[RMDB]
Structure probing data (2A3) for a 177-nucleotide construct. Source: RMDB library RFM100, as collected in RNAgym. Conditions: 150 mM KOAc, 10 mM MgCl2 and 150 mM bicine (pH 8.5), 24 C. Reactivities are given for positions 27 through 126.
RNA sequence: GGGAACGACUCGAGUAGAGUCGAAAAAUGCAUAUGAUGAGAAGCAAGACAGGGACAUCAGCACCCCCUUUCUGUGAAGGUGGGGAGUGAUCGACUAAAGUCUCAAUGGGAAUCUCUCUGAUGCAUAGCUGGCUCCUAUCUUCGGAUAGGAGCCAGCAAAAGAAACAACAACAACAAC
Reactivity to 2A3 in 0.01 (KOAc 150mM, MgCl2 10mM, bicine 150mM(pH8.5), 24C), signal-to-noise 1, nucleotides 027 to 126: a010u070g000c000a000u030a060u050g100a040u100g010a060g020a050a000g200c060a020a030g010a000c000a020g000g000g100a000c000a020u020c000a000g120c020a120c000c000c000c000c020u110u000u000c110u230g300u190g050a030a000g030g120u300g050g000g000g000a040g090u020g000a020u060c030g040a040c000u180a200a040a000g000u000c000u000c000a040a040u100g000g050g160a090a050u000c000u040c000u010c060u070g040a000u000g000c000a000u000a020